RNA sequence: GGGAACGACUCGAGUAGAGUCGAAAACAUCGCGUAUUCGUACGCGAUGGUAGGGCUGUUUUUCUCGCUGACUUUCAGCCCCAAACAAAUAAGUCAGCAAAAUACGCGUAUCCUUCGGGAUACGCAAAUCCAUCCAAAAUUUCGAUUUUGGAUGGAUAAAAGAAACAACAACAACAAC
Reactivity to DMS in 0.01 (KOAc 150mM, MgCl2 10mM, bicine 150mM(pH8.5), 24C), signal-to-noise 6, nucleotides 027 to 126: c010a000u000c000g010c000g020u000a010u000u000c210g030u000a000c000g010c000g010a000u000g000g000u010a080g010g010g010c000u000g000u000u000u000u000u010c060u010c200g020c000u000g000a010c000u000u000u000c010a010g000c000c000c020c080a070a070a130c130a040a040a020u000a000a010g010u000c000a000g010c000a080a050a090a090u020a050c190g000c000g010u000a000u000c000c000u000u020c200g010g000g000a000u000a000c000g020c000a010a030
Reactivity to 2A3 in 0.01 (KOAc 150mM, MgCl2 10mM, bicine 150mM(pH8.5), 24C), signal-to-noise 4, nucleotides 027 to 126: c000a000u000c000g000c000g000u010a030u040u080c240g040u040a000c010g000c000g000a000u000g000g020u070a080g000g030g000c000u000g030u020u020u010u030u020c090u040c090g000c010u010g000a010c000u000u020u020c010a000g010c000c000c010c050a030a060a030c020a010a030a010u110a040a000g000u010c000a000g000c000a000a000a020a010u080a010c060g000c000g000u000a000u000c000c010u010u060c140g040g000g000a000u000a000c000g000c000a000a010

Chemical mapping of a 177-nucleotide RNA with DMS and 2A3. The 2A3 profile rests on 24,338 reads. Reactivities are given for positions 27 through 126.